The record gives the reactivity of an RNA of 177 nucleotides to 2A3 and DMS. For DMS, 10,429 sequencing reads were counted. For 2A3, 6,964 sequencing reads were counted. The reactions ran in a buffer of 150 mM KOAc, 10 mM MgCl2 and 150 mM bicine (pH 8.5), at 24 C.
[RMDB]
RNA sequence: GGGAACGACUCGAGUAGAGUCGAAAAAGCAACCAGUGUGUGUGGGACGUUUUAUCCCAAGCUCUGAGUAGAGCACGCGCUCACACACACCGCGAGCGAGCAUCAGCAGAGCGCAAACGCUGGUAAAUAGAGGAAUAUACUUCGGUAUAUUCCUCUAAAAAGAAACAACAACAACAAC
Reactivity to 2A3 in 0.01 (KOAc 150mM, MgCl2 10mM, bicine 150mM(pH8.5), 24C), signal-to-noise 5, nucleotides 027 to 126: a000g070c040a030a040c020c020a000g000u010g000u000g000u000g000u020g030g000g010a040c020g020u020u080u160u230a110u060c030c010c000a010a010g000c000u000c010u060g300a250g140u280a020g170a000g000c000a010c020g040c020g000c000u010c000a010c000a000c000a000c010a000c010c010g030c020g020a010g030c010g010a030g010c010a110u080c020a020g010c010a020g030a030g120c050g020c080a080a050a010c040g000c020u020g020g010u080a070a080a040
Reactivity to DMS in 0.01 (KOAc 150mM, MgCl2 10mM, bicine 150mM(pH8.5), 24C), signal-to-noise 8, nucleotides 027 to 126: a110g010c060a090a170c300c020a050g010u000g010u000g010u000g020u000g000g000g010a060c060g010u010u010u010u000a150u010c030c030c020a090a120g010c000u000c000u000g010a140g010u010a050g000a020g020c010a090c110g000c060g000c010u000c000a010c010a030c020a020c040a020c070c030g020c040g010a300g010c010g000a070g010c060a060u000c040a040g000c030a060g000a140g000c060g020c110a050a070a090c130g010c020u000g000g000u000a040a060a150